[RMDB]
RNA sequence: GGGAACGACUCGAGUAGAGUCGAAAACGGGAUUCGUCCCGAAUCGAGGGGUCUCCGAUGAGUCACGUAUAGCAUCGAUCUAUACUGAAGCCUCCACGGUAUAGGGAGCUAACGUGACGAGGAGACGGAGGCACCCAUAGGUGGAUUUCGAUCCAAAAGAUCGUCUUUACUUCGGUAAAGACGAUCUAAAAGAAACAACAACAACAAC
Reactivity to 2A3 in 0.01 (KOAc 150mM, MgCl2 10mM, bicine 150mM(pH8.5), 24C), signal-to-noise 2, nucleotides 027 to 156: c000g010g000g000a010u070u150c150g050u050c080c010c020g000a000a160u120c110g050a140g080g070g030g020u060c010u000c020c020g250a300u120g010a000g000u000c000a000c000g000u030a070u000a300g000c000a000u300c010g000a000u000c000u010a000u000a000c000u030g070a210a010g020c000c000u030c000c010a010c010g000g000u000a000u000a000g000g010g000a030g000c010u000a000a000c000g000u010g000a010c000g000a060g010g010a000g030a050c050g010g000a000g000g000c010a030c040c030c010a120u200a170g260g030u110g010g030a020u020u090u270c230g080a010u010c000c070a060a220a020
Structure probing data (2A3) for a 207-nucleotide construct. Values cover nucleotides 27 to 156. It was measured as part of the RMDB library RNAMAK.